[RMDB]
RNA sequence: GGGAACGACUCGAGUAGAGUCGAAAACUUCAUGUGAUACUAAAACUCAAAUUCUAAAAUGGGUCAAUAGGCUGGUGCAGUGGUGCACACCUGUAAUCUCAGCACUUUGGCAGGCUGAGGUGGGAGGAUCACUUGAGCCUAGGAAUUCGAGACCAGCGCAAUAUCGCAGAUUCGUCUGCGAUAUUGCAAAAGAAACAACAACAACAAC
Reactivity to 2A3 in 0.01 (KOAc 150mM, MgCl2 10mM, bicine 150mM(pH8.5), 24C), signal-to-noise 2, nucleotides 027 to 156: c010u110u110c040a020u140g030u050g040a070u120a210c060u140a060a060a150a050c050u040c050a030a080a090u180u050c050u140a000a110a000a110u090g040g000g010u000c000a020a090u010a100g050g000c040u060g080g060u150g000c080a020g010u070g130g080u120g020c040a040c010a020c070c000u020g050u040a000a100u010c000u010c030a010g000c010a100c190u070u030u150g080g070c050a010g020g000c040u000g000a000g040g010u000g000g000g000a020g030g000a070u030c000a000c000u000u000g020a000g000c020c000u000a010g000g080a080a090u120u110c100g010a010g010a080c000c030a030g020c020